Structure probing data (DMS and 2A3) for a 177-nucleotide construct. The reactions ran in a buffer of 150 mM KOAc, 10 mM MgCl2 and 150 mM bicine (pH 8.5), at 24 C. Source: RMDB library RFMREP, as collected in RNAgym. In probing experiments dimethyl sulfate is read out at A N1 and C N3, which are open when not base-paired. For 2A3, 7,909 sequencing reads were counted. The DMS profile rests on 3,789 reads. For 2A3 the reverse transcriptase was SuperScript II with manganese. Reactivities are given for positions 27 through 126.

RNA sequence: GGGAACGACUCGAGUAGAGUCGAAAAACUGAGGAAUGAUGACAAGAAAAGGCCGAAUUGCAGUGUCUCCAUCAGCAGUUUGCUCUCCAUGGGCACACGAUGACAAAAUAUCCUGAAGCGAACCACUGUAUAUAUAUCUGUUCGCAGAUAUAUAUACAAAAGAAACAACAACAACAAC
Reactivity to DMS in 0.01 (KOAc 150mM, MgCl2 10mM, bicine 150mM(pH8.5), 24C), signal-to-noise 4, nucleotides 027 to 126: a080c040u000g020a070g010g010a120a030u000g010a110u000g010a090c080a090a070g000a050a070a120a070g000g020c040c060g010a070a090u010u010g020c050a080g010u000g020u000c040u000c030c020a060u010c070a070g010c040a070g000u000u000u000g010c050u000c030u000c120c140a050u000g000g010g020c060a030c060a030c080g010a070u000g010a070c100a040a040a070a090u000a060u000c020c020u000g010a080a070g000c030g010a070a090c050c050a070c220u000
Reactivity to 2A3 in 0.01 (KOAc 150mM, MgCl2 10mM, bicine 150mM(pH8.5), 24C), signal-to-noise 5, nucleotides 027 to 126: a000c020u030g010a020g020g050a110a020u090g050a020u060g020a040c050a060a120g060a070a150a020a020g040g000c020c040g050a060a100u110u070g010c040a020g050u010g010u050c020u010c060c010a050u040c010a010g030c000a010g020u050u070u080g010c010u020c000u000c090c040a100u140g020g010g000c020a010c000a000c030g060a050u080g030a010c050a020a130a020a020u110a040u050c010c010u050g030a050a020g000c010g020a010a010c020c010a030c050u020